[RMDB]
RNA sequence: GGGAACGACUCGAGUAGAGUCGAAAACUUGCACAAACUCCAUCUGCUGCCAUGAGAAAAGGGAAGCCGCCUUUGCAAAACAUUGCUGCCUAAAGAAACUCAGCAGCCUCAGGCCCAAUUCUGCCACUUCUGGUUUGGGUACAGUUAAAGGCAACCCUACAUCUUAACUUUUCGAAGUUAAGAUGUAAAAAGAAACAACAACAACAAC
Reactivity to 2A3 in 0.01 (KOAc 150mM, MgCl2 10mM, bicine 150mM(pH8.5), 24C), signal-to-noise 5, nucleotides 027 to 156: c010u040u110g010c040a040c020a090a120a050c060u060c050c020a110u040c030u100g020c000u030g010c030c040a140u090g040a050g080a090a140a030a040g040g000g030a070a030g060c070c080g010c040c040u050u060u050g010c040a080a090a120a090c040a090u080u140g000c010u020g010c010c030u150a130a130a070g110a080a110a060c040u050c070a020g000c000a000g000c000c020u080c060a020g010g010c000c020c020a010a030u170u070c070u140g050c020c010a080c060u200u150c120u200g050g010u030u030u030g010g000g000u050a080c030a010g010u040u090a060a050a030g020g000c020a020a050c000c010c000
Reactivity to DMS in 0.01 (KOAc 150mM, MgCl2 10mM, bicine 150mM(pH8.5), 24C), signal-to-noise 2, nucleotides 027 to 156: c020u000u000g000c030a110c060a090a070a110c010u000c020c010a090u000c030u000g020c040u000g020c020c000a170u020g000a120g000a060a100a110a190g000g000g000a140a220g000c030c050g050c020c030u020u010u000g040c050a110a140a190a170c060a090u000u000g020c000u000g020c010c010u010a040a090a120g000a090a130a090c040u020c020a070g010c040a070g030c010c000u000c060a070g020g010c010c030c000a030a150u010u000c080u010g020c000c040a060c080u000u000c050u000g000g010u000u000u000g050g040g020u000a030c030a070g000u000u010a040a090a100g020g030c040a070a150c000c020c030